[RMDB]
Record summary: The record gives the reactivity of an RNA of 177 nucleotides to 2A3 and DMS. For 2A3 the reverse transcriptase was SuperScript II with manganese. As a SHAPE reagent, 2A3 marks flexible, mostly unpaired nucleotides at the ribose 2'-OH. Source: RMDB library OK1LIB, as collected in RNAgym. Conditions: 150 mM KOAc, 10 mM MgCl2 and 150 mM bicine (pH 8.5), 24 C.

RNA sequence: GGGAACGACUCGAGUAGAGUCGAAAAUACGAUAGCUUCACACCAGAAUGAUAUACGGACGAAGUUAACAUCAUUAUUAGCGCUAGCUAGAUGCAAGCACGUCUAGAGUGAAGUUACAUUGAGAUCAGUCGGUCCUGCAAUUCGUUGCAGGAUCGACAAAAGAAACAACAACAACAAC
Reactivity to 2A3 in 0.01 (KOAc 150mM, MgCl2 10mM, bicine 150mM(pH8.5), 24C), signal-to-noise 5, nucleotides 027 to 126: u160a010c040g090a100u020a000g020c000u010u010c000a010c020a020c030c030a050g110a160a100u150g050a040u040a010u020a120c080g030g000a000c010g050a220a040g020u060u010a050a000c000a000u030c000a010u010u280a060u140u110a090g020c040g050c200u110a120g000c010u000a000g000a010u020g010c030a050a070g000c030a020c030g000u000c010u030a080g010a030g060u000g000a000a000g000u000u010a020c020a040u070u200g120a090g020a100u110c020a000
Reactivity to DMS in 0.01 (KOAc 150mM, MgCl2 10mM, bicine 150mM(pH8.5), 24C), signal-to-noise 5, nucleotides 027 to 126: u040a040c110g010a200u000a010g020c000u010u000c010a030c030a240c130c100a090g010a110a120u040g010a120u030a050u050a120c150g000g020a040c010g000a210a130g050u010u000a140a180c040a000u000c000a090u010u050a100u050u020a000g000c020g050c220u090a090g040c000u000a000g000a030u000g000c120a110a070g000c090a180c010g000u010c000u000a050g000a130g000u000g000a020a010g000u000u000a020c090a130u010u000g000a040g020a150u010c050a070